Record summary:
Chemical mapping of a 177-nucleotide RNA with 2A3 and DMS. Reactivities are given for positions 27 through 126. DMS adducts were read by reverse transcription with MarathonRT. For 2A3 the reverse transcriptase was SuperScript II with manganese.

[RMDB]
RNA sequence: GGGAACGACUCGAGUAGAGUCGAAAAGAUAUGGACCUCGAGCUUUUGACGAGGCUACAUUCGGAAACGAAUGGUCCUCGAUAAGCUCGAAGGUCCUAAGUCAAAGGUACCUGUUCGCAGGUACCAACUCAUGUCAUAACUUCGGUUAUGACAUGAGAAAAGAAACAACAACAACAAC
Reactivity to 2A3 in 0.01 (KOAc 150mM, MgCl2 10mM, bicine 150mM(pH8.5), 24C), signal-to-noise 6, nucleotides 027 to 126: g020a010u050a040u120g000g000a010c000c000u000c000g000a010g000c020u140u210u300u300g300a270c080g000a000g010g000c030u110a110c020a010u000u000c010g020g000a040a030a030c020g000a010a000u020g010g050u140c010c000u020c010g110a160u060a300a000g000c000u000c000g000a010a000g000g000u000c000c000u000a020a000g020u000c050a150a070a080g020g000u000a000c010c000u010g050u080u090c300g020c080a000g000g000u000a000c000c000a000a000
Reactivity to DMS in 0.01 (KOAc 150mM, MgCl2 10mM, bicine 150mM(pH8.5), 24C), signal-to-noise 5, nucleotides 027 to 126: g000a050u000a300u010g000g000a010c010c000u000c010g000a020g020c010u000u000u010u010g010a190c120g000a020g000g000c090u010a100c010a010u000u000c010g010g010a110a090a180c000g000a000a010u000g000g010u000c000c000u000c000g010a150u010a010a030g010c000u000c000g020a040a030g020g000u010c000c000u000a010a090g000u010c040a120a150a130g000g010u000a000c000c010u000g010u000u010c200g020c000a020g010g010u000a000c000c010a030a040